RNA sequence: GGGAACGACUCGAGUAGAGUCGAAAACACUCAUCAAGCGCCUCGAGCGCUCGCUCGCGUUCACGAUGUUCUCCGGGCAAUCGCUGCAAACCGAAUUCCGGCUGCUCACGAGUAUCAGCCAUACGAGCCACCCGGUCGGAUGGGAAGAACUGUCCGCUCUUGAGGAAGAUUUCGAUCUUCCUCAAGAAAAAGAAACAACAACAACAAC
Reactivity to 2A3 in 0.01 (KOAc 150mM, MgCl2 10mM, bicine 150mM(pH8.5), 24C), signal-to-noise 3, nucleotides 027 to 156: c040a010c010u080c020a050u100c090a110a030g010c030g000c070c040u250c220g070a090g080c040g010c010u020c010g000c010u010c000g020c010g040u110u080c130a100c140g100a070u150g010u050u020c000u000c010c010g000g000g020c010a030a080u040c040g010c090u120g040c050a080a080a090c020c010g060a060a080u160u030c010c010g000g020c010u020g000c000u020c020a050c060g120a070g040u030a070u160c040a040g130c020c000a070u090a170c090g000a000g020c020c010a030c030c020c000g010g040u020c000g000g000a030u080g040g060g040a100a080g000a130a080c020u010g010u000c010c000g070c050
Reactivity to DMS in 0.01 (KOAc 150mM, MgCl2 10mM, bicine 150mM(pH8.5), 24C), signal-to-noise 1, nucleotides 027 to 156: c080a130c070u000c050a060u010c080a090a010g050c000g000c010c080u060c180g010a120g030c000g030c040u000c000g030c000u000c040g010c040g020u000u010c080a070c040g010a300u010g020u010u000c010u010c040c010g010g020g060c000a050a080u000c040g000c010u000g030c100a090a170a180c030c030g030a160a290u000u010c040c030g060g000c020u000g030c030u000c050a130c010g010a170g040u020a060u000c030a110g000c080c110a190u000a030c060g000a220g000c000c020a110c040c050c040g070g000u010c000g000g010a080u020g010g050g000a040a100g010a060a030c050u000g100u010c020c000g000c110
The record gives the reactivity of an RNA of 207 nucleotides to 2A3 and DMS. It was measured as part of the RMDB library OK3TST. DMS adducts were read by reverse transcription with MarathonRT. The RNA was probed in 150 mM KOAc, 10 mM MgCl2 and 150 mM bicine (pH 8.5) at 24 C.